RNA sequence: GGGAACGACUCGAGUAGAGUCGAAAAUCAAAGAGCGUACAGCACACUCAGACUGUACGACAGUCUGAGACACACGUACGCUAGUCCAACGAGAGAGAGAGAGCGUUGGAACAAGUGUGUGAAAAAAGUGACAAAAUUACUUCGGUAAUUUUGUCACAAAAGAAACAACAACAACAAC
Reactivity to DMS in 0.01 (KOAc 150mM, MgCl2 10mM, bicine 150mM(pH8.5), 24C), signal-to-noise 2, nucleotides 027 to 126: u000c080a070a130a110g000a070g000c000g000u010a020c020a100g040c150a150c270a170c000u010c000a020g000a040c000u010g000u000a090c300g000a080c040a000g000u000c000u010g000a030g010a060c130a040c040a040c110g000u000a020c000g000c040u000a020g000u000c040c000a030a030c010g000a120g030a120g000a070g020a080g020a050g000a070g020c000g000u000u000g000g010a040a110c080a050a060g010u000g050u000g000u000g000a000a080a030a050a050a100
Reactivity to 2A3 in 0.01 (KOAc 150mM, MgCl2 10mM, bicine 150mM(pH8.5), 24C), signal-to-noise 3, nucleotides 027 to 126: u130c060a080a070a030g130a020g020c000g020u000a000c010a020g080c140a010c000a010c050u000c000a010g010a010c010u020g040u200a240c100g050a030c060a000g000u000c000u000g010a000g060a000c010a000c000a000c040g000u020a000c010g000c000u010a000g010u000c000c000a000a000c010g020a000g000a000g000a010g000a000g010a010g000a110g020c000g000u010u000g000g020a010a020c010a030a040g090u080g000u020g010u060g180a090a030a030a000a010a040